[RMDB]
RNA sequence: GGGAACGACUCGAGUAGAGUCGAAAAAGCAUAGGUACGCCUAUGCAAAUGUCAGUUGCGGCUCAUCGUCUGGCACUUUGCUUGUUAAUAUCGCUAGCUGCCUAGCGAAGGGCAACAAAUGACAGAACUGGUGAAACGAAUUCGUUCGUUUCACCAGAAAAGAAACAACAACAACAAC
Reactivity to 2A3 in 0.01 (KOAc 150mM, MgCl2 10mM, bicine 150mM(pH8.5), 24C), signal-to-noise 5, nucleotides 027 to 126: a000g020c000a010u000a000g000g000u030a020c250g050c010c000u010a000u020g000c000a100a000a020u040g000u000c010a010g010u010u030g040c040g010g020c020u000c020a030u010c020g190u050c030u020g020g020c000a010c020u220u120u160g020c020u100u070g090u250u150a250a170u190a160u300c040g000c000u010a020g000c110u000g000c010c030u050a000g000c010g010a040a050g000g020g000c010a000a000c020a010a030a020u010g000a010c020a020g080a100a020
Reactivity to DMS in 0.01 (KOAc 150mM, MgCl2 10mM, bicine 150mM(pH8.5), 24C), signal-to-noise 3, nucleotides 027 to 126: a110g020c000a010u010a020g000g030u040a060c210g020c010c010u000a000u000g020c010a020a040a060u000g020u000c010a020g010u000u010g020c300g000g030c000u000c010a100u000c030g010u000c020u000g000g020c000a030c030u000u000u000g010c030u020u050g000u020u030a150a140u030a100u010c300g000c010u000a000g000c200u000g010c030c000u010a120g000c020g000a000a060g000g010g000c000a020a010c000a000a030a050u000g000a000c000a050g000a040a100